Structure probing data (DMS) for a 177-nucleotide construct. For DMS, 1,115 sequencing reads were counted. It was measured as part of the RMDB library TTRINS. Conditions: 150 mM KOAc, 10 mM MgCl2 and 150 mM bicine (pH 8.5), 24 C.

RNA sequence: GGGAACGACUCGAGUAGAGUCGAAAAGAUAUGGAUCCACUCCCCACCGAUGUAGGCCGAUGAAAUUCCCGGCAAUCGGAAACGAUUGCCGGGAAUGGAGGCUGAGGUCGAGGUGGAUCCUAAGUCACAUGUCCUUACAGUUCGCUGUAAGGACAUGAAAAGAAACAACAACAACAAC
Reactivity to DMS in 0.01 (KOAc 150mM, MgCl2 10mM, bicine 150mM(pH8.5), 24C), signal-to-noise 1, nucleotides 027 to 126: g000a070u020a210u010g010g050a000u000c010c010a010c020u000c100c040c030c110a300c080c020g000a010u000g010u000a300g010g040c010c010g000a090u020g000a170a110a020u010u000c000c000c020g030g000c020a010a010u010c000g000g000a090a090a200c020g010a000u000u000g000c000c000g040g010g010a000a000u000g000g000a100g020g000c030u000g000a060g000g000u000c030g010a130g010g000u000g010g010a000u000c000c000u020a020a080g010u020c170a230